[RMDB]
RNA sequence: GGGAACGACUCGAGUAGAGUCGAAAAUGGCAGGGCCAGACGAGGUGCAGCUGGCACAGACGGCUGGUGGGCGCGUGGACUCCUUCUUCCUGGUGGCUGCCCCCCGAUGCCGGUGCAUAGCGGCGGCAACACGCGUGCUAUUCGUAGCACGCGUGUUAAAAGAAACAACAACAACAAC
Reactivity to DMS in 0.01 (KOAc 150mM, MgCl2 10mM, bicine 150mM(pH8.5), 24C), signal-to-noise 2, nucleotides 027 to 126: u010g020g080c020a050g000g010g010c000c040a040g010a100c100g010a070g000g020u000g000c060a180g000c040u010g010g000c050a060c070a060g000a300c070g010g010c010u010g000g040u000g020g020g020c050g040c070g030u010g000g010a120c070u000c020c000u000u010c080u010u000c070c010u000g000g050u010g020g010c000u000g000c020c000c060c020c030c030g010a110u000g000c020c000g010g020u000g010c040a090u000a120g020c030g010g010c000g010g000c040